The record gives the reactivity of an RNA of 177 nucleotides to DMS and 2A3. For DMS, 1,414 sequencing reads were counted. 2A3 adducts were read by reverse transcription with SuperScript II with manganese. The 2A3 profile rests on 1,759 reads. The reactions ran in a buffer of 150 mM KOAc, 10 mM MgCl2 and 150 mM bicine (pH 8.5), at 24 C. Reactivities are given for positions 27 through 126.
RNA sequence: GGGAACGACUCGAGUAGAGUCGAAAAACGGUCACGGGCCAGACGGUCCAGACAUCCUGACCGUAAAGACUGGAAGCAAGGGAGUCUUGUACGACGAUUCCUUUCGCAAGAUUUACACGGACCUCGGCGCUAUGAAACGAUUCGUCGUUUCAUAGCGAAAAGAAACAACAACAACAAC
Reactivity to DMS in 0.01 (KOAc 150mM, MgCl2 10mM, bicine 150mM(pH8.5), 24C), signal-to-noise 3, nucleotides 027 to 126: a050c030g000g010u000c010a140c150g000g000g010c010c020a160g030a060c230g000g020u000c020c020a190g000a090c160a080u000c040c070u000g010a020c040c010g010u000a080a130a060g000a170c040u000g000g010a180a190g000c050a040a010g000g000g020a000g010u000c000u020u010g020u030a120c290g000a050c180g000a020u010u000c020c000u010u000u000c140g040c000a060a080g000a150u000u000u000a080c130a090c110g000g000a100c010c010u000c090g010g020
Reactivity to 2A3 in 0.01 (KOAc 150mM, MgCl2 10mM, bicine 150mM(pH8.5), 24C), signal-to-noise 1, nucleotides 027 to 126: a000c040g000g000u050c050a070c160g010g020g010c020c040a050g100a170c090g000g000u010c040c000a010g080a050c030a020u100c010c010u020g030a030c020c010g000u030a020a040a030g120a040c040u070g020g090a110a040g020c000a000a000g030g000g000a000g000u000c000u040u090g080u120a130c180g070a010c050g000a090u010u000c000c000u010u000u040c060g060c020a040a010g000a050u090u190u000a060c120a020c070g010g010a030c000c000u070c060g100g000